Description
Structure probing data (DMS) for a 177-nucleotide construct. For DMS, 811 sequencing reads were counted. Values are in units of 0.01, from 0 to 300, in steps of 10. It was measured as part of the RMDB library OK2TRN. DMS adducts were read by reverse transcription with MarathonRT. Values cover nucleotides 27 to 126.
RNA sequence: GGGAACGACUCGAGUAGAGUCGAAAAGGUACCAAAGCAGAACGAAAUGGUGGAGUUGGAAAGCAAAUCAGUAUACAAAGGACUCAGGGAUUAUAGUAGCAUAUCAACCCUGAUUUGCCAACUGACGCCCUAGCUGUGAUUUCGAUCACAGCUAGGGAAAAGAAACAACAACAACAAC
Reactivity to DMS in 0.01 (KOAc 150mM, MgCl2 10mM, bicine 150mM(pH8.5), 24C), signal-to-noise 2, nucleotides 027 to 126: g000g000u020a220c020c030a110a060a120g020c050a110g000a070a140c110g020a070a050a100u000g010g050u020g020g040a100g050u000u000g030g000a000a150a100g010c090a010a090a100u000c030a010g000u000a080u000a110c190a060a120a150g010g000a070c170u000c080a050g000g010g000a210u010u020a060u000a050g010u010a130g010c120a100u000a010u010c150a060a120c000c000c000u000g000a010u010u000u020g000c000c000a080a200c060u000g010a050c150g010